[RMDB]
An RNA of 177 nucleotides, treated with DMS and 2A3 and read out base by base. The RNA was probed in 150 mM KOAc, 10 mM MgCl2 and 150 mM bicine (pH 8.5) at 24 C. The DMS profile rests on 1,753 reads. For 2A3, 1,674 sequencing reads were counted. Reactivities are rounded to 0.1 and cut off at 0 and 3. Reactivities are given for positions 27 through 126.
RNA sequence: GGGAACGACUCGAGUAGAGUCGAAAAAACAGUCUUCUUCUUCAGAUCAGCGAAGAACGGAACCGUCACCUUAGUUCCUUGUAAAAUCCAAACUAUGCCCUCGCCCGGCCGGCAGUGAAAACUGAUCGGCGAAGAGUUGAUUCGUCAACUCUUCGCCAAAAGAAACAACAACAACAAC
Reactivity to DMS in 0.01 (KOAc 150mM, MgCl2 10mM, bicine 150mM(pH8.5), 24C), signal-to-noise 1, nucleotides 027 to 126: a030a050c180a040g070u010c010u000u000c030u010u030c060u020u040c090a000g000a120u020c060a000g000c150g020a110a090g020a050a020c100g000g000a090a060c030c050g010u000c040a120c040c040u040u000a120g000u000u000c020c010u000u020g000u050a060a050a070a100u000c020c040a000a070a020c220u020a090u000g070c000c000c000u000c030g010c040c040c000g000g050c020c040g010g000c020a010g020u000g000a050a050a090a010c030u010g000a050u040c030
Reactivity to 2A3 in 0.01 (KOAc 150mM, MgCl2 10mM, bicine 150mM(pH8.5), 24C), signal-to-noise 3, nucleotides 027 to 126: a000a010c090a040g020u040c060u030u010c010u000u000c000u030u040c050a040g020a170u110c040a020g140c060g070a050a000g070a080a020c060g040g020a000a030c050c000g050u110c020a070c060c000u030u040a020g030u040u030c010c000u030u100g120u080a080a090a040a080u000c040c000a090a030a080c030u060a040u150g020c020c000c000u000c060g010c000c000c000g010g030c000c010g020g000c000a040g000u020g130a020a000a050a050c020u010g020a070u040c080